[RMDB]
RNA sequence: GGGAACGACUCGAGUAGAGUCGAAAAUAACAGCAGACGUUCGUAAGCAUCAGCCAUAUGCUGUUCGUUAAAGGUUUUGGUGAAGCUAAGGUCAAGUUUGGUGGUUUGUAAGCGGUGCUUGUGCUCCGCCCUUUGCUUCGUUCGCGAAGCAAAGGGCAAAAGAAACAACAACAACAAC
Reactivity to DMS in 0.01 (KOAc 150mM, MgCl2 10mM, bicine 150mM(pH8.5), 24C), signal-to-noise 2, nucleotides 027 to 126: u000a070a070c060a050g010c030a050g000a110c130g010u000u000c040g030u010a080a090g000c060a060u000c050a160g020c080c060a070u010a110u000g010c000u000g010u010u010c100g030u000u000a060a070a110g000g000u000u000u000u010g000g030u000g000a120a060g010c020u000a080a070g020g010u000c040a070a080g010u000u010u000g000g010u000g000g000u000u020u010g020u010a120a080g030c020g010g020u000g010c030u000u000g020u010g020c060u000c060c080
Reactivity to 2A3 in 0.01 (KOAc 150mM, MgCl2 10mM, bicine 150mM(pH8.5), 24C), signal-to-noise 1, nucleotides 027 to 126: u040a000a010c010a000g090c010a000g090a080c000g050u110u060c050g020u060a100a040g040c040a030u060c010a020g000c050c000a120u080a020u170g000c000u010g010u020u050c040g050u130u060a070a040a040g110g020u000u090u130u040g000g010u040g040a060a050g030c020u000a030a070g070g000u010c050a040a070g040u010u090u090g050g020u030g000g140u080u040u160g110u070a100a000g040c020g080g010u030g040c020u100u140g010u070g080c020u000c010c010
Structure probing data (DMS and 2A3) for a 177-nucleotide construct. The data come from the RNA Mapping Database (RMDB), library OK2TST.